Record summary:
The record gives the reactivity of an RNA of 177 nucleotides to 2A3 and DMS. DMS adducts were read by reverse transcription with MarathonRT. The reactions ran in a buffer of 150 mM KOAc, 10 mM MgCl2 and 150 mM bicine (pH 8.5), at 24 C. 2A3 adducts were read by reverse transcription with SuperScript II with manganese. Reactivities are given for positions 27 through 126. Source: RMDB library OK2TST, as collected in RNAgym.

RNA sequence: GGGAACGACUCGAGUAGAGUCGAAAAGUUUUUGUGCUAGAGGCAUUACUUGUCGCUUUUGUUCCAUGGGUUGCGGGUGUCUUGGCCGGCGUGGUGUUGCUGGUAGGCGAGGAGUGCUAGGCAGUGCCGUAUGCCAAUCUUUCGAGAUUGGCAUACGAAAAGAAACAACAACAACAAC
Reactivity to 2A3 in 0.01 (KOAc 150mM, MgCl2 10mM, bicine 150mM(pH8.5), 24C), signal-to-noise 2, nucleotides 027 to 126: g020u020u040u040u190u120g040u050g030c000u020a040g000a100g200g050c020a040u050u080a060c030u030u070g080u080c040g060c050u130u040u090u120g070u150u000c050c020a060u080g050g010g050u040u090g060c000g020g040g000u070g010u080c090u090u100g050g050c030c000g020g030c040g000u040g020g050u100g020u120u080g060c020u040g030g050u040a070g010g040c000g020a030g020g000a030g010u060g000c030u030a040g030g000c020a000g000u010g120c050
Reactivity to DMS in 0.01 (KOAc 150mM, MgCl2 10mM, bicine 150mM(pH8.5), 24C), signal-to-noise 3, nucleotides 027 to 126: g010u000u000u010u010u010g010u000g000c050u000a100g010a210g010g010c030a030u010u000a070c080u000u000g020u000c080g000c080u000u000u010u010g020u000u010c030c020a100u000g010g000g010u000u000g010c060g010g000g020u010g010u000c050u000u000g020g020c050c030g020g020c070g030u000g010g010u010g000u010u010g010c040u000g020g010u010a060g010g000c040g020a070g010g010a060g020u000g000c040u000a080g010g020c050a060g000u000g000c090